This 177-nucleotide RNA was probed chemically with 2A3 and DMS. DMS adducts were read by reverse transcription with MarathonRT.
RNA sequence: GGGAACGACUCGAGUAGAGUCGAAAAUCGUAUAGAACACAUACAUUUGAUGGGUGAUUCCAAACAAAUCGGUCCAUAUUGUAAAGACAAGACCAUAUUAGAAUUCAACACUAAUAACUACGUCACGCCGAUCUCACUAUUUCGAUAGUGAGAUCGGAAAAGAAACAACAACAACAAC
Reactivity to 2A3 in 0.01 (KOAc 150mM, MgCl2 10mM, bicine 150mM(pH8.5), 24C), signal-to-noise 2, nucleotides 027 to 126: u090c050g000u050a070u040a150g160a090a050c080a000c020a060u110a060c000a040u090u070u240g060a060u010g000g000g000u050g050a080u090u050c050c000a040a120a050c050a010a130a070u070c030g020g010u000c010c010a030u040a030u160u130g120u180a090a130a010g050a040c020a020a010g030a020c020c040a000u030a040u060u020a020g060a070a080u140u200c030a050a020c000a000c080u000a020a030u000a100a050c040u070a010c070g010u020c070a020c100g000
Reactivity to DMS in 0.01 (KOAc 150mM, MgCl2 10mM, bicine 150mM(pH8.5), 24C), signal-to-noise 1, nucleotides 027 to 126: u000c010g040u000a130u000a040g000a100a060c080a130c230a130u000a110c180a040u000u000u000g020a070u000g000g000g030u010g060a080u000u000c000c030a070a100a080c170a030a020a010u000c010g000g010u000c050c000a030u010a040u030u020g000u000a040a010a190g020a140c150a080a050g010a040c010c020a120u000a100u000u000a010g000a110a030u000u000c180a060a110c200a100c050u020a000a000u000a040a090c190u000a030c190g020u000c080a050c190g000
The 2A3 profile rests on 1,170 reads. As a SHAPE reagent, 2A3 marks flexible, mostly unpaired nucleotides at the ribose 2'-OH.